The record gives the reactivity of an RNA of 207 nucleotides to 2A3. 2A3 adducts were read by reverse transcription with SuperScript II with manganese. Source: RMDB library RNAMAK, as collected in RNAgym. The RNA was probed in 150 mM KOAc, 10 mM MgCl2 and 150 mM bicine (pH 8.5) at 24 C.

RNA sequence: GGGAACGACUCGAGUAGAGUCGAAAAGGGGUCGUCCUUGUCAGUCGAUUCCCAGGCUGAUGACCAUACACUGAAGCCUCCACGGUGUAUGCAAGGCCUGCAUCGACUUGGAUUUAGGACGACGGAGGCACCCAAAAUGCCCGGUUCGCCGGGCAAACUUAGUUCACCAGUUCGCUGGUGAACUAAGAAAAGAAACAACAACAACAAC
Reactivity to 2A3 in 0.01 (KOAc 150mM, MgCl2 10mM, bicine 150mM(pH8.5), 24C), signal-to-noise 2, nucleotides 027 to 156: g030g010g000g010u000c000g000u000c010c010u000u020g070u050c240a150g010u000c000g000a010u070u140c070c040c020a000g000g000c010u040g010a300u010g010a020c000c000a000u000a000c020a000c010u020g050a180a050g020c000c000u010c000c010a010c010g000g010u000g000u000a000u010g000c060a230a260g000g000c000c000u010g000c030a000u010c000g000a020c050u090u280g130g020a030u220u160u140a000g000g000a000c000g000a000c000g000g000a000g010g000c010a020c000c000c010a030a100a010a060u070g000c020c020c030g000g010u040u040c160g040c020c000g000g000g000c000a010a020a020